Structure probing data (DMS and 2A3) for a 177-nucleotide construct.
As a SHAPE reagent, 2A3 marks flexible, mostly unpaired nucleotides at the ribose 2'-OH.
The reactions ran in a buffer of 150 mM KOAc, 10 mM MgCl2 and 150 mM bicine (pH 8.5), at 24 C.
Values cover nucleotides 27 to 126.
It was measured as part of the RMDB libraries RFM100 and RFMREP.
For 2A3 the reverse transcriptase was SuperScript II with manganese.
RNA sequence: GGGAACGACUCGAGUAGAGUCGAAAAAUGAAGGCGGCAGGUGGAGACGGAUCCGGGUCCGGGACCCAUCUCGAGUUGGAGUCAAAGCUUUGUGCUUGUCUGGCGCUCGGAUUCUGUCUCCUUCGGCAUGUUACAUUAACUUCGGUUAAUGUAACAUAAAAGAAACAACAACAACAAC
Reactivity to DMS in 0.01 (KOAc 150mM, MgCl2 10mM, bicine 150mM(pH8.5), 24C), signal-to-noise 9, nucleotides 027 to 126: a070u010g000a080a070g010g010c070g010g010c030a060g010g010u010g000g000a020g000a020c010g010g010a010u000c010c000g010g000g010u000c010c000g010g000g000a040c010c010c000a010u010c030u030c170g000a120g010u000u000g000g000a160g010u010c050a040a010a010g010c000u010u040u030g020u040g010c000u000u000g000u040c000u000g000g010c300g010c000u000c000g000g000a010u010u010c000u020g010u000c000u000c000c000u000u010c020g000g020c110
Reactivity to 2A3 in 0.01 (KOAc 150mM, MgCl2 10mM, bicine 150mM(pH8.5), 24C), signal-to-noise 9, nucleotides 027 to 126: a000u150g030a040a020g060g010c010g020g020c030a030g030g080u070g030g020a000g000a000c000g000g000a000u000c000c000g000g000g010u000c010c000g010g010g010a010c010c010c010a030u030c100u110c130g300a300g090u030u030g040g030a130g020u040c030a040a020a010g000c020u130u210u300g140u300g040c000u030u020g020u030c010u010g010g000c100g000c040u000c000g000g000a010u130u010c010u080g000u000c000u000c000c000u000u010c000g010g000c020